[RMDB]
RNA sequence: GGGAACGACUCGAGUAGAGUCGAAAAGCGGAUCGGUGGUCAGGAUGUGCGCGAGCUGACGCUCGACUCGCUGCGGUCAGCCAUCGGCCUGGUACCCGAAGAUGCCGUCCUGUUCUCCGGAACGAUCGCUUUUGCCCACGUUCGCGUGGGCAAAAGCAAAAGAAACAACAACAACAAC
Reactivity to 2A3 in 0.01 (KOAc 150mM, MgCl2 10mM, bicine 150mM(pH8.5), 24C), signal-to-noise 1, nucleotides 027 to 126: g100c000g030g000a050u020c000g110g000u100g030g000u050c000a010g000g000a020u010g180u060g040c120g010c030g000a090g050c010u000g010a000c000g000c070u050c010g120a140c070u020c170g000c090u100g000c030g040g120u050c000a000g000c000c000a080u020c000g000g080c060c000u010g140g000u080a070c000c010c010g000a000a000g000a000u060g020c010c000g000u000c000c000u020g020u000u020c020u000c000c000g010g000a040a000c070g040a120u040c040